[RMDB]
RNA sequence: GGGAACGACUCGAGUAGAGUCGAAAAUAUUGAGGUCUGUUCAUAGAAUGAAUAGCACACAACUUUGCCUCAUUUGCAUUGGAAAAAGAGGGAAUACUCUAAUCCGGAGAAUUCUACCCCAUAUGGGCAUACCGCAGAAAUUCGUUUCUGCGGUAUGAAAAGAAACAACAACAACAAC
Reactivity to 2A3 in 0.01 (KOAc 150mM, MgCl2 10mM, bicine 150mM(pH8.5), 24C), signal-to-noise 3, nucleotides 027 to 126: u220a020u070u100g030a050g030g010u000c010u020g000u000u000c020a020u070a180g250a300a100u090g010a010a010u030a030g050c090a000c000a000c000a140a130c060u080u140u090g000c000c020u050c030a060u070u080u120g050c030a030u030u170g020g020a000a090a030a060a030g040a060g120g010g070a090a090u140a110c010u000c000u020a070a090u070c050c040g000g020a010g020a050a050u060u000c020u080a100c010c030c030c030a060u130a180u300g020g000g000
Reactivity to DMS in 0.01 (KOAc 150mM, MgCl2 10mM, bicine 150mM(pH8.5), 24C), signal-to-noise 5, nucleotides 027 to 126: u010a080u000u000g010a130g000g020u000c020u010g010u000u000c010a060u000a170g000a080a300u010g000a040a010u000a030g000c220a050c100a050c090a050a080c090u000u010u000g000c040c040u000c040a060u000u000u000g000c080a090u000u000g010g010a030a030a050a070a070g010a050g010g000g000a060a040u010a070c010u000c000u010a040a160u000c170c090g000g010a070g000a110a050u010u000c020u010a140c100c000c010c060a110u000a110u010g010g010g000
Chemical mapping of a 177-nucleotide RNA with 2A3 and DMS. Reactivities are given for positions 27 through 126. The RNA was probed in 150 mM KOAc, 10 mM MgCl2 and 150 mM bicine (pH 8.5) at 24 C. For DMS the reverse transcriptase was MarathonRT. It was measured as part of the RMDB library OK2TST. The DMS profile rests on 3,421 reads.